[RMDB]
RNA sequence: GGGAACGACUCGAGUAGAGUCGAAAAAGGCGCGUAUCGACGCUGACCUGACGACGAUGUACGACGACGGUGCUGGUGGCAACGUGCAGCUGAUGGACUUGAUGAACACCAACAACCUCGACCUGUUCCGCCAGUACGCUCGCCGCGUGAGUGGCGAACUUGAGACACAGUUCGCUGUGUCUCAAGUAAAAGAAACAACAACAACAAC
Reactivity to 2A3 in 0.01 (KOAc 150mM, MgCl2 10mM, bicine 150mM(pH8.5), 24C), signal-to-noise 5, nucleotides 027 to 156: a000g080g000c060g010c030g030u140a190u290c110g100a090c000g050c030u050g090a230c000c010u040g040a040c030g000a010c020g040a060u080g020u150a050c020g030a030c030g000a020c080g090g000u020g000c000u010g000g040u000g000g010c070a050a000c060g080u090g000c040a020g000c040u110g030a080u180g010g050a060c070u060u090g020a060u080g070a160a020c080a030c150c010a040a040c020a030a080c030c020u060c020g060a090c010c030u040g020u070u000c010c000g020c010c000a020g030u010a020c010g000c010u030c000g000c010c020g010c020g040u090g100a060g030u020g010g000c000g000a020
Reactivity to DMS in 0.01 (KOAc 150mM, MgCl2 10mM, bicine 150mM(pH8.5), 24C), signal-to-noise 2, nucleotides 027 to 156: a130g030g010c000g000c020g000u000a100u020c040g010a090c010g040c010u010g010a130c040c000u020g010a120c020g010a080c040g000a170u010g020u010a090c030g020a050c000g020a050c010g000g020u010g010c020u020g010g070u010g010g010c110a030a020c050g020u000g010c070a120g030c030u000g010a090u000g000g010a200c110u000u030g020a160u000g000a030a150c090a090c010c020a040a140c020a050a090c050c040u010c030g020a060c030c030u000g000u000u000c000c010g020c030c020a050g040u000a020c030g000c000u010c020g040c030c020g020c000g000u010g000a160g030u000g010g040c000g010a020